An RNA of 177 nucleotides, treated with DMS and read out base by base.
Reactivities are given for positions 27 through 126.
The DMS profile rests on 4,153 reads.
The reactions ran in a buffer of 150 mM KOAc, 10 mM MgCl2 and 150 mM bicine (pH 8.5), at 24 C.
RNA sequence: GGGAACGACUCGAGUAGAGUCGAAAAUGACUUUCUGUGGUGACCAACUUCUCCCCACCCAUCACAAAAGAAAGUAGCAAGGAGAAAAGGGCUUCAUUUCACAAUGGCCACGGCCAUAGGUUGAAACUGAAGCCCUUAUGUUCGCAUAAGGGCUUCAAAAAGAAACAACAACAACAAC
Reactivity to DMS in 0.01 (KOAc 150mM, MgCl2 10mM, bicine 150mM(pH8.5), 24C), signal-to-noise 5, nucleotides 027 to 126: u000g020a070c010u000u000u000c030u010g010u000g010g010u000g000a110c110c120a090a070c150u000u000c080u000c030c010c030c030a110c130c090c000a060u010c050a040c110a080a050a210a070g000a020a030a030g010u000a050g000c080a090a060g000g010a110g000a060a060a020a070g000g010g000c070u000u010c040a090u000u000u000c010a010c030a140a020u000g010g000c000c020a080c300g060g010c000c000a020u000a040g020g020u010u010g000a020a030a040c300